[RMDB]
RNA sequence: GGGAACGACUCGAGUAGAGUCGAAAAUGAUGUGCAGAGUCGACUUGUUUUCUUUGCCAAUGGGGAUGAUAUAGUGCUGGCUGUGCAGGAGGCGGAUGUGUAUGUAUACGAUCACUUUGCUAAAUCACUCUCAUAGGAGAUUCGUCUCCUAUGAGAGAAAAGAAACAACAACAACAAC
Reactivity to 2A3 in 0.01 (KOAc 150mM, MgCl2 10mM, bicine 150mM(pH8.5), 24C), signal-to-noise 4, nucleotides 027 to 126: u080g020a010u050g030u050g050c020a000g020a010g100u060c050g040a060c030u050u030g030u060u100u040u020c010u020u080u090g050c040c020a050a100u110g000g000g040g000a020u040g080a010u070a030u050a170g060u050g050c050u040g020g000c040u040g010u020g070c020a020g020g030a020g010g030c040g020g000a040u060g070u010g040u070a040u120g090u020a040u010a120c030g030a030u050c010a010c050u070u040u080g040c030u050a110a010a070u110c070a040
Reactivity to DMS in 0.01 (KOAc 150mM, MgCl2 10mM, bicine 150mM(pH8.5), 24C), signal-to-noise 5, nucleotides 027 to 126: u010g000a080u000g010u010g010c020a060g000a080g020u010c090g000a070c100u000u010g010u000u010u000u000c030u000u000u000g010c020c080a080a110u020g010g000g000g010a070u000g010a080u000a090u000a070g020u000g010c050u000g010g000c050u000g010u010g010c060a070g010g000a140g020g010c050g010g010a050u000g010u000g000u000a050u000g010u010a070u000a060c120g010a060u000c030a060c060u000u000u000g020c040u000a050a080a070u000c120a110
The data come from the RNA Mapping Database (RMDB), library OK2TRN. This 177-nucleotide RNA was probed chemically with 2A3 and DMS. The RNA was probed in 150 mM KOAc, 10 mM MgCl2 and 150 mM bicine (pH 8.5) at 24 C. 2A3 adducts were read by reverse transcription with SuperScript II with manganese. For 2A3, 4,866 sequencing reads were counted.